[RMDB]
RNA sequence: GGGAACGACUCGAGUAGAGUCGAAAAGAUAUGGACCGAUUGGAACUACGGAGGCUAUCGGAAACGAUAGCUCCGCCACAAAUCGGUCCUAAGUCAAAACGUGCCUUACGUUCGCGUAAGGCACGAACCUUCUGGGCAAGUUCGCUUGCCCAGAAGGAAAAGAAACAACAACAACAAC
Reactivity to DMS in 0.01 (KOAc 150mM, MgCl2 10mM, bicine 150mM(pH8.5), 24C), signal-to-noise 1, nucleotides 027 to 126: g000a020u000a300u010g010g000a050c000c000g000a040u000u000g010g000a100a220c210u010a100c030g000g010a050g030g010c000u000a020u000c000g000g010a180a020a150c000g020a010u000a000g050c000u000c000c000g000c030c170a060c160a070a020a000u010c000g000g000u000c000c010u000a010a000g000u010c050a080a040a210a100c020g030u000g010c000c000u000u000a020c000g050u000u020c210g010c000g020u000a000a000g000g000c010a000c000g010a000a060
Reactivity to 2A3 in 0.01 (KOAc 150mM, MgCl2 10mM, bicine 150mM(pH8.5), 24C), signal-to-noise 1, nucleotides 027 to 126: g030a020u010a020u090g010g000a000c000c000g000a010u000u050g070g130a280a210c170u300a150c300g020g010a060g160g220c010u000a010u000c000g070g000a030a000a030c000g000a000u000a000g000c000u000c000c000g080c000c030a110c040a000a110a000u000c010g000g020u000c000c000u000a000a000g000u030c010a010a010a060a160c000g020u010g000c010c000u000u030a000c000g030u000u100c300g000c000g080u000a000a000g000g020c000a010c000g000a000a000